[RMDB]
RNA sequence: GGGAACGACUCGAGUAGAGUCGAAAAGAUAUGGACUAGCUGGAGCUUCGGGGAGAGGAACUACAUGGGGCUUCGGAAACGAAGCCGACAUGCCUCUCCCCGAAGCGUUGAAAGCUAGUCCUAAGUCCAAGCUCAUAAUGUUCGCAUUAUGAGCUUGAAAAGAAACAACAACAACAAC
Reactivity to DMS in 0.01 (KOAc 150mM, MgCl2 10mM, bicine 150mM(pH8.5), 24C), signal-to-noise 2, nucleotides 027 to 126: g010a100u000a300u000g030g000a020c000u000a000g020c010u020g020g010a130g030c010u000u000c000g030g020g030g000a040g010a030g010g010a100a020c070u000a300c020a020u000g010g000g000g000c000u000u000c000g000g010a140a130a170c000g000a010a000g000c000c000g020a130c000a010u010g000c000c000u000c000u000c020c000c000c000g010a000a010g010c010g030u000u000g000a130a160a040g000c000u000a000g000u000c000c010u000a010a090g010u000c030

An RNA of 177 nucleotides, treated with DMS and read out base by base. The reactions ran in a buffer of 150 mM KOAc, 10 mM MgCl2 and 150 mM bicine (pH 8.5), at 24 C. The data come from the RNA Mapping Database (RMDB), library TTRINS. For DMS the reverse transcriptase was MarathonRT.